[RMDB]
RNA sequence: GGGAACGACUCGAGUAGAGUCGAAAACAAAACAAAACAAACAAAGUUAAGCCUAAUACCUACGCGCAACCGGAGGCUAAACCGGAGACGAACGCGAGUCCUUGCGCGUAUCGCGUUCAAAACAAAACACUCGCUGACCGUUCGCGGUCAGCGAGUGAAAAGAAACAACAACAACAAC
Reactivity to 2A3 in 0.01 (KOAc 150mM, MgCl2 10mM, bicine 150mM(pH8.5), 24C), signal-to-noise 1, nucleotides 027 to 126: c040a000a000a000a000c040a030a120a070a000c130a000a010a040c020a030a120a000g180u260u250a170a110g030c040c000u130a120a030u160a090c000c000u000a000c000g050c000g000c000a000a040c000c050g000g000a060g040g160c070u070a090a100a100c030c000g060g000a200g030a010c120g000a000a000c000g050c040g000a000g000u000c010c050u080u060g000c070g000c000g000u000a000u000c030g020c000g000u020u000c020a010a010a010a010c120a000a000a000a000